[RMDB]
RNA sequence: GGGAACGACUCGAGUAGAGUCGAAAAUCCGAAGAGUUCGCUCUUCGGAAAACGGGUUCGAAUCCCCCCCGAACCGCGGGUAGCGGCCCAAAAAUAAAAUAAAAAGCAUAGCGUUCGCGCUAUGCAAGCCAUUAUACAUGUUCGCAUGUAUAAUGGCAAAAGAAACAACAACAACAAC
Reactivity to DMS in 0.01 (KOAc 150mM, MgCl2 10mM, bicine 150mM(pH8.5), 24C), signal-to-noise 2, nucleotides 027 to 126: u000c000c000g010a020a000g010a030g000u000u000c260g010c010u000c000u020u010c000g000g000a000a000a080a120c120g020g020g000u000u000c020g010a290a200u010c030c000c020c020c050c040c020g000a030a070c030c000g000c020g010g030g030u010a110g010c120g000g020c010c050c010a010a070a060a090a070u000a060a070a100a090u000a080a030a100a090a120g000c000a000u000a000g010c000g030u000u020c240g030c040g000c000u020a000u000g000c000a030a050
Reactivity to 2A3 in 0.01 (KOAc 150mM, MgCl2 10mM, bicine 150mM(pH8.5), 24C), signal-to-noise 2, nucleotides 027 to 126: u000c000c000g020a000a000g020a000g030u150u140c250g020c080u020c000u000u020c020g000g000a020a000a000a000c000g020g040g030u140u150c030g050a150a300u100c060c000c020c030c000c000c000g010a020a020c040c000g030c020g110g050g040u090a050g090c000g000g000c000c000c000a010a070a020a010a030u200a020a080a020a010u200a020a050a000a030a000g000c000a000u000a000g000c000g020u030u060c230g000c010g010c040u000a000u000g000c000a000a000
This 177-nucleotide RNA was probed chemically with DMS and 2A3.
Values are in units of 0.01, from 0 to 300, in steps of 10.
It was measured as part of the RMDB library M2PK50.
For 2A3, 1,980 sequencing reads were counted.